[RMDB]
RNA sequence: GGGAACGACUCGAGUAGAGUCGAAAAGCUGUGCCUAGGUAAGCCUAUAUCUGGGCGCACUAGAGGCACUAUGUCGCAUCAUGGUCCCUGUGAACUCGAAGCUUGAUGCGACAAGUUUUCAGUGAUCUCAGACACUAUAGGCUUAGUUCGUGAGAGCUAAUACGCUAGCAUUCGUGCUAGCGUAUUAAAAAGAAACAACAACAACAAC
Reactivity to DMS in 0.01 (KOAc 150mM, MgCl2 10mM, bicine 150mM(pH8.5), 24C), signal-to-noise 3, nucleotides 027 to 156: g000c000u000g030u010g000c010c010u010a110g010g000u000a030a030g010c010c010u020a040u000a060u010c040u000g000g000g020c000g000c030a020c000u000a090g010a060g050g000c070a100c090u020a090u000g000u000c000g010c010a040u000c010a060u000g030g020u000c010c010c020u000g000u010g020a050a120c030u000c040g000a030a200g010c030u020u020g010a100u010g020c020g000a080c010a010a040g030u010u000u000u000c030a080g020u000g020a060u000c030u000c020a060g000a090c150a100c200u000a060u000a040g030g030c010u000u000a070g020u010u000c050g030u020g000a180g000a070g030c080
Reactivity to 2A3 in 0.01 (KOAc 150mM, MgCl2 10mM, bicine 150mM(pH8.5), 24C), signal-to-noise 5, nucleotides 027 to 156: g030c030u040g030u070g070c000c010u040a060g030g030u030a000a010g000c000c000u020a020u010a020u090c010u010g000g000g030c030g010c010a000c000u060a070g010a020g050g060c050a010c100u120a250u170g000u010c000g000c010a010u000c000a000u060g090g050u170c020c030c070u100g080u100g130a130a110c070u060c200g060a060a020g080c010u000u010g010a000u010g000c000g000a000c000a000a000g010u040u010u000u070c010a000g010u010g060a080u020c000u000c000a010g010a050c060a020c130u040a030u010a030g010g040c010u000u010a050g030u200u060c080g030u090g080a110g000a010g060c000
This 207-nucleotide RNA was probed chemically with DMS and 2A3. For 2A3 the reverse transcriptase was SuperScript II with manganese. The data come from the RNA Mapping Database (RMDB), library OK3TST. The 2A3 profile rests on 3,832 reads. DMS adducts were read by reverse transcription with MarathonRT.